About this RNA
An RNA of 177 nucleotides, treated with DMS and 2A3 and read out base by base. DMS adducts were read by reverse transcription with MarathonRT. It was measured as part of the RMDB library TTRDES. 2A3 adducts were read by reverse transcription with SuperScript II with manganese.
RNA sequence: GGGAACGACUCGAGUAGAGUCGAAAAGAUAUGGAGGGUGAUAAUUGAGAUAGUCCACUUGGAUUUAGAGCUCGGAAACGAGCUCUUGUCAGUGGAUUAUCAAUUAACAAUUAUACCCUCCUAAGUCGGAUAAAUGGAAGUUCGCUUCCAUUUAUCCAAAAGAAACAACAACAACAAC
Reactivity to DMS in 0.01 (KOAc 150mM, MgCl2 10mM, bicine 150mM(pH8.5), 24C), signal-to-noise 2, nucleotides 027 to 126: g000a090u010a280u000g000g000a010g010g000g000u000g010a050u000a020a000u000u000g010a260g020a020u000a010g010u020c000c000a000c010u010u030g010g000a020u000u000u000a000g020a030g010c010u010c020g010g020a080a090a200c010g000a010g020c000u000c000u000u000g000u000c000a050g050u000g000g010a010u000u000a000u000c000a130a120u020u010a120a220c000a010a010u000u000a010u000a040c000c000c000u000c000c010u000a010a010g000u020c100
Reactivity to 2A3 in 0.01 (KOAc 150mM, MgCl2 10mM, bicine 150mM(pH8.5), 24C), signal-to-noise 2, nucleotides 027 to 126: g010a020u080a020u110g000g010a000g030g000g050u190g300a020u000a050a030u010u080g070a120g010a200u010a000g020u030c020c010a000c020u070u300g250g000a050u300u190u100a010g000a000g020c000u010c010g050g000a000a060a060c020g010a000g000c000u000c000u000u000g000u000c010a000g030u010g000g000a000u000u010a000u000c000a050a000u010u020a000a000c000a000a000u010u000a000u000a020c000c000c000u000c000c000u000a000a000g000u010c020